[RMDB]
RNA sequence: GGGAACGACUCGAGUAGAGUCGAAAAGCCAAACUGGUAAUGAGUUAUUGAGAUGGAUUUGGGAAAGACCUGUAGCGGAGCAACUUGUCAGAAUCUGUGAACCGGGACAGGAGGAUGAUAAAGAUGAAACAACCUGGCUAUUCGUAGCCAGGUUGUUAAAAGAAACAACAACAACAAC
Reactivity to DMS in 0.01 (KOAc 150mM, MgCl2 10mM, bicine 150mM(pH8.5), 24C), signal-to-noise 2, nucleotides 027 to 126: g000c020c000a050a190a040c010u020g000g000u080a020a060u040g020a100g010u000u000a070u000u020g030a030g000a080u050g100g000a070u080u020u010g000g000g050a010a060a070g010a070c070c010u010g010u000a070g040c000g030g000a030g010c030a060a120c110u000u080g000u020c000a060g000a200a160u010c030u040g000u030g000a140a070c030c030g000g000g000a040c020a070g020g010a110g000g060a140u010g000a000u010a020a010a100g010a040u000g000a120
Reactivity to 2A3 in 0.01 (KOAc 150mM, MgCl2 10mM, bicine 150mM(pH8.5), 24C), signal-to-noise 2, nucleotides 027 to 126: g000c010c000a130a130a090c140u060g030g000u030a050a100u110g050a010g170u170u010a120u070u120g100a120g010a070u080g030g050a040u040u040u150g000g010g050a000a100a000g050a050c000c000u080g000u000a070g070c000g050g050a010g040c010a000a050c060u040u100g000u200c060a000g030a150a000u040c000u000g060u180g110a050a000c080c010g030g110g000a060c000a000g030g000a000g010g020a010u030g050a070u100a050a080a010g090a070u170g070a030